[RMDB]
This 207-nucleotide RNA was probed chemically with 2A3. The data come from the RNA Mapping Database (RMDB), library M2RFPK. 2A3 adducts were read by reverse transcription with SuperScript II with manganese.

RNA sequence: GGGAACGACUCGAGUAGAGUCGAAAAGCUCCUUCAGGUGAACGAUCUCGGUUGAUUCUCUGAAGGCAUGAUCACCCCGUCCGAUGCGGAAGUUCGUGCUUCCGUCGAACGCGAAAGUCGGACGGCGAAAACGAGUUACCGUUCGCGGUAACUCGAAGGACCAGGAAUUGUUCGCAAUUCCUGGUCCAAAAGAAACAACAACAACAAC
Reactivity to 2A3 in 0.01 (KOAc 150mM, MgCl2 10mM, bicine 150mM(pH8.5), 24C), signal-to-noise 2, nucleotides 027 to 156: g020c010u010c010c000u020u000c000a060g110g030u190g040a010a010c010g020a070u040c010u170c280g190g000u210u050g020a300u110u020c000u000c000u010g000a000a000g000g000c000a120u090g040a030u120c140a180c020c000c000c000g000u010c000c000g010a010u010g050c000g000g000a000a000g040u070u300c200g160u300g120c000u000u000c010c010g030u010c060g040a100a020c080g020c080g180a020a030a000g060u000c000g000g000a000c020g000g010c050g090a110a110a000a000c000g000a000g000u000u000a000c000c000g000u050u080c170g050c000g110g000u000a000a010c000u020c000g000a010a020